[RMDB]
RNA sequence: GGGAACGACUCGAGUAGAGUCGAAAAUCUGUAGCUGCAAUCUCACAUCAUAUGCUCUAUCCGAUGGGAAGAACCACUUGUAAAUCUUGUAUAAAUAAUGUAGAAGAUAUGAGUAGAGACGAGUGGUUCCCCAAGGGAGGUUCGCCUCCCUUGGGGAAAAAGAAACAACAACAACAAC
Reactivity to 2A3 in 0.01 (KOAc 150mM, MgCl2 10mM, bicine 150mM(pH8.5), 24C), signal-to-noise 1, nucleotides 027 to 126: u000c030u100g000u130a010g050c040u000g060c080a000a050u050c060u020c010a060c000a110u010c070a000u100a100u280g110c100u040c000u050a010u000c000c070g100a050u060g000g040g000a180a000g000a140a120c000c000a000c000u050u000g000u130a000a070a110u130c020u070u040g170u050a010u070a090a190a190u190a000a110u300g120u060a100g000a260a130g050a010u010a000u050g120a130g040u020a010g040a000g000a000c000g000a000g000u000g040g000u050